RNA sequence: GGGAACGACUCGAGUAGAGUCGAAAAAUAGGCUUAUCAAGAAAGGUGGAGGGACUGGCCCGAUGAAACCCGGCAGCCAGAAAUGGUGCCAAUUCCUGCAGCGGAAACGUUGAAAGAUGAGCCGAUGGGACAGGUCGGUUCGCCGACCUGAAAAGAAACAACAACAACAAC
Reactivity to 2A3 in 0.01 (KOAc 150mM, MgCl2 10mM, bicine 150mM(pH8.5), 24C), signal-to-noise 3, nucleotides 027 to 129: a010u090a020g000g000c010u040u050a000u110c030a100a000g130a160a030a040g090g000u020g040g050a080g000g000g000a020c030u020g070g020c000c030c000g080a110u110g100a060a030a010c000c000c000g000g000c010a090g150c000c000a030g000a000a040a020u000g020g000u010g030c000c010a010a030u000u010c000c010u030g070c020a000g000c010g050g010a050a030a050c010g000u030u010g020a030a020a110g000a010u000g010a000g010c020c000g030a040u020g010g000g050a020
Reactivity to DMS in 0.01 (KOAc 150mM, MgCl2 10mM, bicine 150mM(pH8.5), 24C), signal-to-noise 2, nucleotides 027 to 129: a070u070a130g020g000c060u020u000a050u020c020a140a110g000a000a000a000g050g000u010g000g000a100g000g120g000a220c080u030g020g000c040c060c040g120a100u060g040a030a030a030c020c010c010g010g070c020a080g050c000c000a020g020a130a040a160u030g030g020u030g040c040c030a080a050u080u020c020c030u010g050c060a000g020c010g040g000a050a050a080c040g000u060u000g040a090a090a140g000a030u010g010a060g020c030c000g020a070u000g000g040g000a160